[RMDB]
RNA sequence: GGGAACGACUCGAGUAGAGUCGAAAACAUCAAGCGUAUAAAGUGCAAAAUAUACAAGGUAGUCUUCCUUUCCACUGCCCGUAACCCUGGUAUCAAUCAAGUGAAAAUCUCGAAGAACGUGGACCGCCGGCAAUCCAUCACUUGAAUCGGGAUUCGGUGAAAGUAUUAUCUUCGGAUAAUACUUUCAAAAAGAAACAACAACAACAAC
Reactivity to DMS in 0.01 (KOAc 150mM, MgCl2 10mM, bicine 150mM(pH8.5), 24C), signal-to-noise 2, nucleotides 027 to 156: c050a120u010c090a090a100g020c050g020u000a040u000a060a080a100g010u000g010c060a100a080a090a140u020a120u010a070c050a080a070g010g030u010a090g040u000c040u010u010c010c030u000u000u000c010c030a080c070u000g020c020c000c010g040u000a080a050c020c010c010u000g030g010u000a080u020c110a070a130u000c020a050a040g030u010g000a080a060a060a060u000c000u020c040g010a070a090g010a080a080c100g010u000g020g010a060c040c020g010c040c010g030g030c070a060a080u000c010c000a100u000c030a060c070u010u000g000a050a150u000c030g020g000g010a100u010u000c040g020g020
Reactivity to 2A3 in 0.01 (KOAc 150mM, MgCl2 10mM, bicine 150mM(pH8.5), 24C), signal-to-noise 3, nucleotides 027 to 156: c030a030u130c080a040a090g060c050g060u120a080u090a210a110a060g080u090g040c040a040a030a110a060u180a030u060a090c020a040a000g050g020u050a040g090u030c030u040u060c010c000u010u010u050c020c030a050c020u070g030c000c000c000g030u040a050a060c010c000c020u030g030g030u050a020u140c060a050a030u010c010a050a020g000u010g070a080a050a040a070u030c060u010c060g050a100a060g030a180a080c030g000u030g010g040a030c020c030g070c020c040g080g000c020a010a020u010c010c020a010u030c010a010c040u040u050g070a080a070u100c020g010g020g040a070u080u040c020g010g030